[RMDB]
RNA sequence: GGGAACGACUCGAGUAGAGUCGAAAAAUAGGCUUAUCAAGAGAGGUGGAGGGACUGGCACGAUGAAACCCGGCAGCCAGAAAUGGUGCCAGUUCCUGCAGCGGAAACGUUGAAAGAUGAGCCGAUGCUAGGUCCGACUUCGGUCGGACCAAAAGAAACAACAACAACAAC
Reactivity to 2A3 in 0.01 (KOAc 150mM, MgCl2 10mM, bicine 150mM(pH8.5), 24C), signal-to-noise 3, nucleotides 027 to 129: a000u160a050g000g000c000u030u030a000u010c010a130a030g010a010g010a050g150g110u080g050g030a000g000g000g000a000c030u010g020g000c000a000c240g060a110u070g050a020a030a110c050c010c000g030g050c000a020g030c020c000a040g060a030a080a020u130g030g000u020g000c000c000a020g020u000u000c000c030u030g010c000a000g060c000g020g070a020a040a000c080g030u040u230g080a140a040a010g000a000u030g010a000g000c000c010g000a000u020g010c030u010a000
This 170-nucleotide RNA was probed chemically with 2A3. It was measured as part of the RMDB library 15KLIB. The RNA was probed in 150 mM KOAc, 10 mM MgCl2 and 150 mM bicine (pH 8.5) at 24 C. 2A3 adducts were read by reverse transcription with SuperScript II with manganese.